[RMDB]
RNA sequence: GGGAACGACUCGAGUAGAGUCGAAAAGAUGGAGUGCCUCUCCGCGGGAGAUUGAAGGUUAUCAGUAGACUGUUCGCUAACGCAAAUGACGGCAUAUGUACAUUAAGUAGCAUCACUUCUACAUUAGACGUCCAUACGAUUUCGAUCGUAUGGACGUAAAAGAAACAACAACAACAAC
Reactivity to DMS in 0.01 (KOAc 150mM, MgCl2 10mM, bicine 150mM(pH8.5), 24C), signal-to-noise 3, nucleotides 027 to 126: g040a110u000g000g010a100g030u010g000c030c010u010c030u000c130c300g000c060g010g000g050a040g020a020u000u020g000a050a090g000g010u010u000a100u010c180a110g040u020a070g000a010c150u010g000u010u000c040g000c030u000a030a050c050g020c050a070a090a050u010g000a090c190g020g000c130a020u000a070u000g000u010a030c050a070u020u010a080a110g010u000a010g000c090a080u000c040a050c140u000u000c000u000a050c050a120u000u010a080g000
Reactivity to 2A3 in 0.01 (KOAc 150mM, MgCl2 10mM, bicine 150mM(pH8.5), 24C), signal-to-noise 1, nucleotides 027 to 126: g100a050u110g010g010a100g020u040g000c010c020u060c000u000c040c000g000c030g040g090g010a040g040a100u290u300g040a080a000g070g020u020u120a110u230c200a050g080u090a060g060a060c010u030g140u080u020c010g010c020u030a030a000c020g000c000a040a040a070u080g000a000c060g010g030c000a010u050a070u080g060u000a030c010a030u110u150a300a030g040u000a000g000c030a040u060c010a000c010u130u000c020u090a100c010a070u000u060a140g090

Structure probing data (DMS and 2A3) for a 177-nucleotide construct.
In probing experiments dimethyl sulfate is read out at A N1 and C N3, which are open when not base-paired.
For 2A3, 1,129 sequencing reads were counted.
DMS adducts were read by reverse transcription with MarathonRT.
For 2A3 the reverse transcriptase was SuperScript II with manganese.